RNA sequence: GGGAACGACUCGAGUAGAGUCGAAAAGAGGUCGUCUCGGCCACGCUGUACCAGCUCGACAGGACGGUCUACUUCGACAAGGUCGACAGCACCUGGCAGGAGACCCGCACGGUCCAGCACAACAUGGGUCAUAUGAUUCUUUCGAGAAUCAUAUGACAAAAGAAACAACAACAACAAC
Reactivity to 2A3 in 0.01 (KOAc 150mM, MgCl2 10mM, bicine 150mM(pH8.5), 24C), signal-to-noise 4, nucleotides 027 to 126: g140a050g010g030u050c020g040u040c060u020c080g030g000c010c010a040c060g000c020u010g010u050a050c000c040a040g040c070u030c040g040a030c030a070g060g040a040c050g040g000u000c040u070a100c030u050u050c030g060a040c050a100a090g060g020u030c020g080a050c020a010g020c030a040c020c030u020g020g000c020a050g140g000a030g000a010c000c010c000g020c010a070c050g020g010u000c030c000a020g040c030a030c010a070a070c020a100u150g260g000
Reactivity to DMS in 0.01 (KOAc 150mM, MgCl2 10mM, bicine 150mM(pH8.5), 24C), signal-to-noise 7, nucleotides 027 to 126: g010a100g010g020u000c060g010u000c040u000c040g010g000c010c020a070c200g010c020u000g000u010a070c060c050a120g010c100u000c080g000a050c200a060g010g010a140c120g010g000u010c030u000a100c050u000u000c050g000a060c090a110a110g010g010u000c080g000a050c040a030g030c030a080c070c110u000g000g010c040a070g010g000a120g010a070c030c020c030g010c090a120c080g000g010u000c000c010a070g000c050a050c070a030a040c080a120u020g010g010
This 177-nucleotide RNA was probed chemically with 2A3 and DMS.
For DMS the reverse transcriptase was MarathonRT.
The DMS profile rests on 8,806 reads.
For 2A3, 9,713 sequencing reads were counted.
Values cover nucleotides 27 to 126.
2A3 adducts were read by reverse transcription with SuperScript II with manganese.
It was measured as part of the RMDB library OK2TST.